[RMDB]
RNA sequence: GGGAACGACUCGAGUAGAGUCGAAAACGCUGGGAUCCACCGUAUACAGCUAUGAAGUACUGAAGCGCGCACGGUAUGGAGCUGUACGUUGGAUCCUGUGCUGAAGCGCGCACGGCAACCGAAAGGUGCGAAAUCAGCAGGAGUUCGCUCCUGCUGACCGAACGUUUUAGUUCGCUAAAACGUUCGGAAAAGAAACAACAACAACAAC
Reactivity to 2A3 in 0.01 (KOAc 150mM, MgCl2 10mM, bicine 150mM(pH8.5), 24C), signal-to-noise 1, nucleotides 027 to 156: c050g020c010u050g020g030g010a000u000c010c000a010c000c000g010u030a100u050a080c060a000g010c020u070a250u300g000a000a000g010u000a010c010u040g070a270a070g020c010g030c020g030c050a100c050g000g000u000a000u010g040g010a040g010c030u040g010u050a020c010g020u040u040g010g000a000u010c000c000u020g000u000g000c020u030g030a100a030g000c020g010c000g000c030a010c000g030g000c000a010a020c040c000g050a120a090a010g040g000u000g020c000g030a070a090a050u040c000a000g030c010a000g000g010a020g000u120u280c280g040c140u000c020c000u000g000c000u000g000a000